Description: This 177-nucleotide RNA was probed chemically with DMS and 2A3. For DMS the reverse transcriptase was MarathonRT. For DMS, 1,858 sequencing reads were counted. The RNA was probed in 150 mM KOAc, 10 mM MgCl2 and 150 mM bicine (pH 8.5) at 24 C.

RNA sequence: GGGAACGACUCGAGUAGAGUCGAAAAGAUAUGGAUCGGUGUACCAGCGUUGAAAUUAAUCGGAAACGAUUAAUGGAGCUGACACACGAUCCUAAGUCAAAGUGAAGCUGGUUCGCCAGCUUCACAAGCAUCUAGCAUACUUCGGUAUGCUAGAUGCAAAAGAAACAACAACAACAAC
Reactivity to DMS in 0.01 (KOAc 150mM, MgCl2 10mM, bicine 150mM(pH8.5), 24C), signal-to-noise 2, nucleotides 027 to 126: g000a030u000a300u010g010g000a030u010c010g040g020u010g020u010a200c300c130a010g010c000g000u010u010g000a190a090a010u000u020a000a010u000c010g030g000a060a030a120c000g020a010u000u000a010a000u000g010g020a070g040c010u000g010a050c000a000c000a070c040g000a020u000c000c020u000a030a120g010u000c050a130a120a190g010u000g000a020a000g020c000u000g000g020u000u000c300g010c000c000a010g000c010u000u010c000a010c000a080a080
Reactivity to 2A3 in 0.01 (KOAc 150mM, MgCl2 10mM, bicine 150mM(pH8.5), 24C), signal-to-noise 1, nucleotides 027 to 126: g000a010u010a010u070g020g000a010u030c010g030g020u040g040u150a300c250c160a040g030c010g250u300u010g000a000a020a010u010u010a000a000u010c030g030g000a020a010a030c000g000a000u010u010a000a000u010g030g000a020g030c050u080g110a000c000a000c000a000c020g000a010u010c000c000u000a010a020g010u020c030a000a210a000g030u000g010a000a000g000c010u000g000g090u110u300c300g060c090c010a000g000c020u000u000c000a000c000a000a000